RNA sequence: GGGAACGACUCGAGUAGAGUCGAAAAACAACAGAUAGCUGGAACCAGCGUAGAAUUCUACGCAUAUCCAUAGCGAAUGGUACCUGUAAAGAAAAUAAUGAUCGAUGUACAAGUACCAACAGUGAUCAAUGCCAUGGUGAUGUCAAUCACAUAUGCAGAUAUUAUAGCGGUUCGCCGCUAUAAUAUCAAAAGAAACAACAACAACAAC
Reactivity to 2A3 in 0.01 (KOAc 150mM, MgCl2 10mM, bicine 150mM(pH8.5), 24C), signal-to-noise 6, nucleotides 027 to 156: a000c060a020a010c030a020g140a110u090a060g020c010u020g040g010a100a160c050c050a070g000c020g000u010a010g080a170a300u300u100c000u000a010c010g000c010a010u050a030u060c010c000a050u130a030g010c010g060a070a050u060g000g000u000a000c000c010u000g010u040a040a090a020g120a030a110a020a030u270a030a130u140g110a090u060c070g030a030u120g010u020a010c010a030a010g000u000a010c000c000a020a020c040a040g080u050g080a020u100c090a080a070u090g030c040c020a010u070g010g050u020g020a010u030g150u220c080a060a050u000c000a020c020a040u130a020u110g010c020a030
Reactivity to DMS in 0.01 (KOAc 150mM, MgCl2 10mM, bicine 150mM(pH8.5), 24C), signal-to-noise 2, nucleotides 027 to 156: a100c070a020a110c070a090g030a130u000a080g030c060u000g030g000a090a060c180c060a150g070c000g030u000a030g000a240a120u000u010c040u010a020c020g040c030a160u000a080u000c060c020a100u000a080g030c040g030a150a150u010g000g010u000a000c020c020u020g020u000a050a090a100g000a100a040a060a090u000a110a180u000g000a190u000c070g030a220u010g030u010a020c000a040a020g000u000a000c000c010a040a060c090a080g000u000g010a110u000c020a060a090u000g020c020c070a130u000g000g030u050g000a100u000g020u000c130a040a100u000c010a080c050a090u000a040u000g010c140a100